An RNA of 177 nucleotides, treated with 2A3 and DMS and read out base by base.
For 2A3 the reverse transcriptase was SuperScript II with manganese.
Conditions: 150 mM KOAc, 10 mM MgCl2 and 150 mM bicine (pH 8.5), 24 C.
For DMS, 20,635 sequencing reads were counted.
DMS adducts were read by reverse transcription with MarathonRT.
[RMDB]
RNA sequence: GGGAACGACUCGAGUAGAGUCGAAAAGAGAAGCACGAAAGGAUGGGAAACGUGCUGAUCGAAAGAACCAUCCGAAGGCGGGAAUAAACUCUCGAAUAACCGCUGGAGAGGAGUCUAAUGACGAAAACCCUUAUGAUAACUUCGGUUAUCAUAAGGGAAAAGAAACAACAACAACAAC
Reactivity to 2A3 in 0.01 (KOAc 150mM, MgCl2 10mM, bicine 150mM(pH8.5), 24C), signal-to-noise 9, nucleotides 027 to 126: g020a000g000a020a010g010c010a010c020g060a170a110a060g200g070a120u290g060g020g040a050a080a010c000g000u010g000c000u000g010a040u020c010g010a020a060a010g060a030a020c010c000a050u020c000c010g010a020a010g020g000c030g000g000g050a070a060u190a140a170a090c070u120c020u050c110g040a090a060u080a070a030c000c000g000c000u010g010g000a060g010a010g040g020a020g010u000c040u140a220a140u260g030a030c060g070a040a020a040a050
Reactivity to DMS in 0.01 (KOAc 150mM, MgCl2 10mM, bicine 150mM(pH8.5), 24C), signal-to-noise 9, nucleotides 027 to 126: g000a060g010a210a040g000c000a010c000g000a090a070a120g000g010a140u010g000g010g000a090a110a140c000g020u000g000c010u000g000a220u000c040g000a080a090a060g020a150a160c010c010a080u020c040c020g010a240a170g010g010c010g000g010g010a100a090u030a050a080a110c140u010c080u020c120g000a120a060u010a100a200c020c010g000c010u000g000g000a230g000a070g000g010a100g010u010c020u030a090a120u030g000a060c040g010a090a070a080a100

Source: RMDB library OK1LIB, as collected in RNAgym.